[RMDB]
RNA sequence: GGGAACGACUCGAGUAGAGUCGAAAAGAUAUGGAUGACAGCAACAGCGUGUGGAUCGGAAACGAUCCCACGACAUGCUGAGUCCUAAGUCAAAACCGAAUCUUACCCUUCGGGGUAAGAUUCGGAAGCACGGUUAAAAGUUCGCUUUUAACCGUGCAAAAGAAACAACAACAACAAC
Reactivity to DMS in 0.01 (KOAc 150mM, MgCl2 10mM, bicine 150mM(pH8.5), 24C), signal-to-noise 1, nucleotides 027 to 126: g000a020u000a210u010g000g000a030u000g010a190c300a010g000c000a010a230c260a180g000c030g000u010g000u000g020g000a010u000c010g000g000a010a010a080c000g000a000u000c000c000c000a000c010g010a110c200a070u000g000c000u010g040a300g000u000c000c000u000a040a120g000u000c010a080a070a070a200c000c000g030a000a000u010c000u000u000a010c000c000c000u000u000c170g020g000g000g000u000a000a000g000a000u000u000c000g010g010a000a090